An RNA of 177 nucleotides, treated with DMS and read out base by base.

[RMDB]
RNA sequence: GGGAACGACUCGAGUAGAGUCGAAAAGCUACCUCAUCAAAAAGAAGUUAGGACAAAUAGCUGUCAACAAUUGCCUUUUGCUUAUCCCUUCAGUUGAUGUGAUAAAAGAUGGUAGUUGCCCUUGACACCAGUGUGAUUUGUUCGCAAAUCACACUGGAAAAGAAACAACAACAACAAC
Reactivity to DMS in 0.01 (KOAc 150mM, MgCl2 10mM, bicine 150mM(pH8.5), 24C), signal-to-noise 1, nucleotides 027 to 126: g000c010u010a010c000c000u000c040a040u040c010a020a040a120a080a120g000a020a040g010u000u000a070g040g000a060c010a040a040a050u000a120g020c100u010g000u010c250a050a080c110a030a020u010u000g010c020c010u000u000u000u000g000c170u000u000a140u010c110c220c020u000u010c040a130g010u010u020g000a010u000g000u020g010a190u020a060a080a050a140g010a030u000g010g000u020a020g000u000u000g000c040c040c010u020u030g020a090c160a050

In probing experiments dimethyl sulfate is read out at A N1 and C N3, which are open when not base-paired.